About this RNA:
This 177-nucleotide RNA was probed chemically with DMS and 2A3. 2A3 adducts were read by reverse transcription with SuperScript II with manganese. Reactivities are rounded to 0.1 and cut off at 0 and 3. For 2A3, 1,641 sequencing reads were counted. The reactions ran in a buffer of 150 mM KOAc, 10 mM MgCl2 and 150 mM bicine (pH 8.5), at 24 C. It was measured as part of the RMDB library OK2TRN.
RNA sequence: GGGAACGACUCGAGUAGAGUCGAAAAAGAAAUAAUUUGAUUGAACGCGUAGCUGAUGGUAGACCGCUAUUCACAAAUCCCACCACUGCGCAUUAUGUGCAAUGCAGAACAAUAUUAGAGUUCAUGGUCUCCGUUUUAUUUUCGAAUAAAACGGAGAAAAAGAAACAACAACAACAAC
Reactivity to DMS in 0.01 (KOAc 150mM, MgCl2 10mM, bicine 150mM(pH8.5), 24C), signal-to-noise 3, nucleotides 027 to 126: a040g000a160a090a070u000a090a080u010u000u000g000a120u000u020g000a020a030c270g000c070g000u000a080g010c080u010g030a070u000g010g030u010a060g000a090c130c060g010c030u010a090u020u000c050a040c090a020a040a090u000c020c000c000a150c100c060a040c070u000g010c020g000c010a110u010u010a070u000g010u000g000c030a050a020u000g030c100a080g010a020a040c070a060a070u000a120u000u020a140g020a130g000u000u010c030a060u010g010g000
Reactivity to 2A3 in 0.01 (KOAc 150mM, MgCl2 10mM, bicine 150mM(pH8.5), 24C), signal-to-noise 3, nucleotides 027 to 126: a010g150a050a100a000u170a050a080u100u040u130g080a070u080u090g030a040a000c050g040c040g030u030a020g020c070u060g030a080u140g120g070u040a020g030a020c010c010g000c060u060a110u090u090c030a020c020a060a050a060u040c010c000c000a010c010c040a010c010u020g000c010g000c000a010u160u110a120u300g040u010g010c030a030a060u080g040c020a050g030a110a010c020a080a050u110a130u290u270a060g040a030g090u030u010c020a050u100g100g000